The data come from the RNA Mapping Database (RMDB), library M2PK90. The record gives the reactivity of an RNA of 177 nucleotides to 2A3. The 2A3 profile rests on 871 reads.

[RMDB]
RNA sequence: GGGAACGACUCGAGUAGAGUCGAAAACGUCUUAAAUUAAAUUUCCCUUGCUGAGCUCAUCUCAGCAAACAAUAACAAAUAACAAUUAAGAACAGCAGGGAAGGUUGUUCUUAUUUGUUACAAUUAACCCGUUAGGCAUAUUCGUAUGCCUAACGGGAAAAGAAACAACAACAACAAC
Reactivity to 2A3 in 0.01 (KOAc 150mM, MgCl2 10mM, bicine 150mM(pH8.5), 24C), signal-to-noise 1, nucleotides 027 to 126: c030g060u070c100u270u220a150a160a110u110u110a120a080a070u030u180u060c030c040c000u000u040g000c020u000g010a030g000c100u070c160a130u130c080u000c020a010g070c000a000a000a000c020a010a040u210a070a040c020a050a150a000u050a020a010c000a000a040u000u000a050a000g000a040a000c000a000g000c040a040g160g050g120a100a020g100g040u000u000g000u000u010c020u010u010a010u030u000u000g010u010u020a020c010a040a090u160u100a080a070